[RMDB]
RNA sequence: GGGAACGACUCGAGUAGAGUCGAAAACUCAUGACUACAUGCUCAUGGCGAGUACCGAUCCUACGCAGCUAGCCAUGUGAUCUACUCUAGAGGUACACUAGAGGUACCAUGUCAUGAGAGGUACUCGUACUCCCUCAGCGUUCGCGCUGAGGGAGUAAAAAGAAACAACAACAACAAC
Reactivity to DMS in 0.01 (KOAc 150mM, MgCl2 10mM, bicine 150mM(pH8.5), 24C), signal-to-noise 1, nucleotides 027 to 126: c030u000c000a030u000g000a020c010u000a130c150a180u000g040c050u000c020a030u000g000g040c040g000a080g010u020a000c170c050g030a110u000c120c090u030a050c100g020c110a200g030c100u000a140g020c000c000a020u000g000u020g010a020u000c070u030a020c040u000c010u000a080g010a270g000g000u010a050c150a120c030u000a050g000a050g000g000u010a020c140c040a090u000g000u000c030a030u000g000a010g020a070g030g040u000a030c050u000c000g000
Reactivity to 2A3 in 0.01 (KOAc 150mM, MgCl2 10mM, bicine 150mM(pH8.5), 24C), signal-to-noise 1, nucleotides 027 to 126: c000u020c020a030u050g020a000c010u060a040c010a120u180g050c020u030c020a010u020g030g000c010g010a000g000u010a070c010c060g000a070u080c000c040u060a060c120g040c070a080g050c020u080a010g020c040c040a010u010g010u020g050a070u010c020u010a020c000u010c000u020a030g000a070g150g210u090a050c080a000c050u060a010g040a080g110g050u030a060c020c000a080u100g010u020c000a020u020g000a010g000a010g010g060u030a030c020u000c020g040